Chemical mapping of a 177-nucleotide RNA with 2A3 and DMS.

RNA sequence: GGGAACGACUCGAGUAGAGUCGAAAAACUCUGAGCGUAAUCGCGUCUUGACUAGACUAUAGGUGACGUGAGUAUCUAUCCCAUUGUGCAUAGCGAUGGGAUAAUUCGCUGAUCUAUAGUCACGGAAAUGUGCUGUGCGAUUCGUCGCACAGCACAUAAAAGAAACAACAACAACAAC
Reactivity to 2A3 in 0.01 (KOAc 150mM, MgCl2 10mM, bicine 150mM(pH8.5), 24C), signal-to-noise 2, nucleotides 027 to 126: a000c060u070c050u130g040a020g020c000g090u120a110a120u130c070g010c020g150u010c030u110u110g080a070c060u050a080g010a010c000u000a010u000a010g180g090u060g040a030c040g010u010g010a010g010u020a020u070c050u010a010u000c000c000c000a000u000u060g020u010g000c110a120u300a190g010c000g010a000u010g000g000g010a000u000a000a010u010u000c000g000c000u000g000a000u060c000u000a000u000a000g030u010c010a020c030g050g080a070a200
Reactivity to DMS in 0.01 (KOAc 150mM, MgCl2 10mM, bicine 150mM(pH8.5), 24C), signal-to-noise 2, nucleotides 027 to 126: a040c040u010c000u000g000a110g000c030g020u000a040a110u000c070g010c070g000u010c040u000u030g010a110c210u000a090g010a000c000u000a000u000a000g000g000u000g010a210c300g010u000g000a000g010u000a070u010c250u000a010u000c000c000c000a000u000u010g030u010g030c300a070u000a120g000c000g040a000u000g000g000g000a000u000a000a010u000u000c030g020c010u000g000a080u000c020u010a000u000a020g040u000c010a130c170g000g000a100a050

As a SHAPE reagent, 2A3 marks flexible, mostly unpaired nucleotides at the ribose 2'-OH.
2A3 adducts were read by reverse transcription with SuperScript II with manganese.
The DMS profile rests on 1,218 reads.
It was measured as part of the RMDB library M2PK90.
The RNA was probed in 150 mM KOAc, 10 mM MgCl2 and 150 mM bicine (pH 8.5) at 24 C.